[RMDB]
RNA sequence: GGGAACGACUCGAGUAGAGUCGAAAAGGCAAGGCGACGAACUUGCUGCCUUCCGAGUUACCGAACGACAUCUACCAGAUGGUAGCGGAUGUUACGUUGCGUUUGCUACUCGCUGGGGAGGAGGACGAGCGUGGCUUUCGUCGCCGCUGGCUUGCGCCAACUAUAGGAGCUUCGGCUCCUAUAGUUGAAAAGAAACAACAACAACAAC
Reactivity to DMS in 0.01 (KOAc 150mM, MgCl2 10mM, bicine 150mM(pH8.5), 24C), signal-to-noise 3, nucleotides 027 to 156: g020g010c060a080a120g000g010c000g040a030c010g010a050a120c130u000u030g030c020u000g030c010c010u000u040c040c000g010a190g040u000u010a270c070c000g030a100a200c050g020a130c040a200u000c040u000a090c020c010a040g000a140u000g000g050u000a020g010c040g010g000a020u010g020u000u000a120c200g030u010u000g020c010g040u000u000u000g020c000u000a030c010u000c180g040c020u000g010g010g010g010a100g030g010a240g010g020a120c050g000a080g010c080g010u010g020g070c050u010u010u000c020g000u000c010g000c000c020g000c040u000g000g020c090u000u000g010c030g010c090
Reactivity to 2A3 in 0.01 (KOAc 150mM, MgCl2 10mM, bicine 150mM(pH8.5), 24C), signal-to-noise 4, nucleotides 027 to 156: g060g000c040a070a000g020g010c000g010a000c000g010a020a020c090u110u160g000c000u010g010c010c000u100u040c030c030g030a050g060u080u120a250c090c090g130a100a070c070g060a070c060a170u020c020u170a300c040c000a060g030a210u090g040g000u010a000g000c020g000g010a010u010g020u090u150a180c290g150u200u170g010c010g000u000u010u000g010c000u010a010c000u020c130g020c000u000g000g000g040g000a020g000g040a030g010g030a040c120g070a070g020c100g040u050g000g000c000u020u020u010c000g000u000c000g000c000c000g000c010u010g030g010c010u030u120g010c040g060c030